[RMDB]
RNA sequence: GGGAACGACUCGAGUAGAGUCGAAAAGAUAUGGACUGGUUGAGCCCAGAACUACGCUGAAACUCGGAAACGAGUUACAGCGCUGGGUGUAAGCCAGUCCUAAGUCAAAGCAGCUGUUCGCAGCUGCCUUUUCCAUCAAGUUCGCUUGAUGGAAAAGAAAAGAAACAACAACAACAAC
Reactivity to DMS in 0.01 (KOAc 150mM, MgCl2 10mM, bicine 150mM(pH8.5), 24C), signal-to-noise 8, nucleotides 027 to 126: g010a050u000a300u000g010g000a010c000u000g000g020u000u000g000a300g000c010c000c000a030g000a110a080c130u020a300c030g020c000u000g010a140a020a010c000u000c010g010g000a100a110a220c010g020a030g020u010u000a070c000a000g000c000g010c000u000g000g000g020u000g000u010a290a100g000c000c010a010g000u000c000c000u000a010a050g010u010c040a080a130a160g000c000a010g010c000u000g000u000u010c280g020c010a010g010c000u000g010c000
Reactivity to 2A3 in 0.01 (KOAc 150mM, MgCl2 10mM, bicine 150mM(pH8.5), 24C), signal-to-noise 6, nucleotides 027 to 126: g010a000u070a050u200g000g000a000c010u010g000g050u070u040g040a040g040c020c010c010a000g010a110a110c300u300a040c080g000c010u000g000a090a000a020c000u000c000g020g030a070a080a050c000g010a020g000u010u020a030c000a000g000c000g000c010u000g000g020g020u070g060u070a010a010g010c000c010a010g000u000c000c000u000a000a000g000u000c020a020a020a100g000c000a000g020c010u040g060u170u250c300g020c210a000g020c000u000g000c000